RNA sequence: GGGAACGACUCGAGUAGAGUCGAAAAAAGCGGCCAGCCAUCUCACCUGCCUACAGCAACGAGAAUGCCCAGGGGUCCUGGAACGGGGACCAGGAUGCAGGGCCACUCCUGGUGGAGAACCCUCGUGACUACUCCACUGAAUUAAGUGUCACCAUCAGUAAUACCCUCAUUUCGAUGAGGGUAUUACAAAAGAAACAACAACAACAAC
Reactivity to 2A3 in 0.01 (KOAc 150mM, MgCl2 10mM, bicine 150mM(pH8.5), 24C), signal-to-noise 1, nucleotides 027 to 156: a000a000g060c060g030g000c040c020a000g010c020c000a040u020c010u010c060a030c020c120u010g000c000c020u060a050c060a020g000c000a100a020c010g040a030g030a110a110u050g000c000c000c000a040g020g000g050g020u010c040c010u000g000g030a050a000c000g000g010g000g010a000c020c000a010g000g000a000u080g000c010a000g050g000g000c000c000a040c000u010c000c020u120g010g000u000g000g010a030g010a040a050c070c030c020u030c010g030u070g030a080c040u100a040c000u080c000c020a000c020u020g050a080a100u170u090a140a000g060u030g020u130c000a030c080c010a040u210c020a010